[RMDB]
RNA sequence: GGGAACGACUCGAGUAGAGUCGAAAAUUGAUGGGACCUCCCUGUGGAGAUGAGCAGGAGGCAGGCGAGGGUGCUCACUAAGCUGCUGGAGACACAUGCACAAUAUCGAGCGUGGACACCAAGGACUCCUCUUUGUGGUGGUCAGAGCUGUGGCAGGGUAGUCUUUCAUCUUCGGAUGAAAGACUACAAAAGAAACAACAACAACAAC
Reactivity to 2A3 in 0.01 (KOAc 150mM, MgCl2 10mM, bicine 150mM(pH8.5), 24C), signal-to-noise 1, nucleotides 027 to 156: u060u080g020a050u130g000g050g160a090c030c060u050c040c030c020u000g100u050g010g100a160g010a040u080g020a030g030c050a020g000g040a080g010g070c080a010g040g000c110g070a050g000g070g000u020g000c000u010c000a110c020u020a120a040g010c060u040g000c010u020g070g050a060g010a010c040a000c000a010u150g090c000a060c030a040a150u130a040u190c020g050a000g010c010g000u000g040g000a050c010a040c130c000a010a060g100g020a130c010u010c010c000u000c050u030u030u000g040u090g030g030u030g040g000u050c010a010g030a000g130c020u060g010u030g070g000c000a000g000g080
Record summary
Chemical mapping of a 207-nucleotide RNA with 2A3. For 2A3 the reverse transcriptase was SuperScript II with manganese. The data come from the RNA Mapping Database (RMDB), library OK3TST. The 2A3 profile rests on 521 reads. The RNA was probed in 150 mM KOAc, 10 mM MgCl2 and 150 mM bicine (pH 8.5) at 24 C.